An RNA of 177 nucleotides, treated with 2A3 and DMS and read out base by base.
The DMS profile rests on 3,021 reads.
The data come from the RNA Mapping Database (RMDB), library OK2TST.
For 2A3 the reverse transcriptase was SuperScript II with manganese.
[RMDB]
RNA sequence: GGGAACGACUCGAGUAGAGUCGAAAAGCAGAUCACCGCAGCGGUUGCGGCAGAAAACAGCCGCAUUAUGGGGAUCCUCAACUGUGAGGAGGCUCACGGACGCGAAGAACAGGCACGCGUGCUGGCACAGACCUUAGGAUUUCGAUCCUAAGGUCUGAAAAGAAACAACAACAACAAC
Reactivity to 2A3 in 0.01 (KOAc 150mM, MgCl2 10mM, bicine 150mM(pH8.5), 24C), signal-to-noise 2, nucleotides 027 to 126: g010c030a000g000a110u090c020a030c080c010g000c050a010g050c010g040g000u040u030g000c010g070g000c020a030g190a060a190a000a020c030a040g000c020c000g000c000a000u050u050a080u080g000g010g000g050a000u040c000c010u020c020a120a160c160u170g060u090g200a010g000g000a000g030g060c000u000c020a040c010g030g010a010c020g010c000g030a080a030g030a050a040c030a030g070g020c030a010c040g060c020g010u040g030c020u000g010g020c040a020
Reactivity to DMS in 0.01 (KOAc 150mM, MgCl2 10mM, bicine 150mM(pH8.5), 24C), signal-to-noise 2, nucleotides 027 to 126: g020c050a070g000a070u010c050a120c010c030g000c100a100g010c040g010g020u000u020g010c020g010g030c050a080g000a130a070a150a120c170a060g010c010c000g010c020a060u010u020a090u010g000g010g020g000a090u000c010c000u000c020a100a130c230u010g030u010g010a030g010g000a030g000g020c020u000c010a070c100g000g000a060c030g010c030g010a070a110g000a070a090c130a080g000g000c050a100c060g000c070g020u000g000c020u000g010g000c140a220